[RMDB]
RNA sequence: GGGAACGACUCGAGUAGAGUCGAAAAGAUAUGGACCAGUAGGGAGCGUCUCGGAAACGAGAACGCGAAGAACUACCUGGUCCUAAGUCAAAAGUAAUGUAAUAAUCUUCGGAUUAUUACAUUACAAUCAUUAGAACUUGUUCGCAAGUUCUAAUGAAAAAGAAACAACAACAACAAC
Reactivity to DMS in 0.01 (KOAc 150mM, MgCl2 10mM, bicine 150mM(pH8.5), 24C), signal-to-noise 6, nucleotides 027 to 126: g010a040u010a300u000g000g000a000c000c000a030g010u000a010g010g000g000a070g010c000g010u000c000u000c000g000g000a110a090a170c010g000a010g010a060a020c000g010c000g000a070a110g010a110a170c000u000a000c160c070u000g010g000u010c000c010u010a010a080g000u000c050a090a090a100a120g000u000a000a010u000g000u000a010a010u000a000a000u000c000u000u010c200g020g000a000u000u000a010u000u000a000c000a000u000u000a000c000a090a090
Reactivity to 2A3 in 0.01 (KOAc 150mM, MgCl2 10mM, bicine 150mM(pH8.5), 24C), signal-to-noise 3, nucleotides 027 to 126: g020a010u070a050u150g000g010a010c000c000a010g020u010a010g000g020g030a030g010c020g010u010c000u000c010g030g040a080a090a050c010g000a010g020a150a080c000g010c010g030a140a010g010a010a000c000u010a010c040c120u010g010g000u000c000c000u010a030a020g030u010c020a120a000a070a050g000u010a000a000u010g000u000a000a000u000a010a000u010c010u060u140c300g000g000a000u000u000a000u010u010a000c000a000u000u010a000c000a000a030
The record gives the reactivity of an RNA of 177 nucleotides to DMS and 2A3. The 2A3 profile rests on 11,913 reads. High DMS reactivity at an A or C suggests that its Watson-Crick edge is free. 2A3 adducts were read by reverse transcription with SuperScript II with manganese. The DMS profile rests on 7,775 reads. The reactions ran in a buffer of 150 mM KOAc, 10 mM MgCl2 and 150 mM bicine (pH 8.5), at 24 C. DMS adducts were read by reverse transcription with MarathonRT. Source: RMDB library TTRDEL, as collected in RNAgym.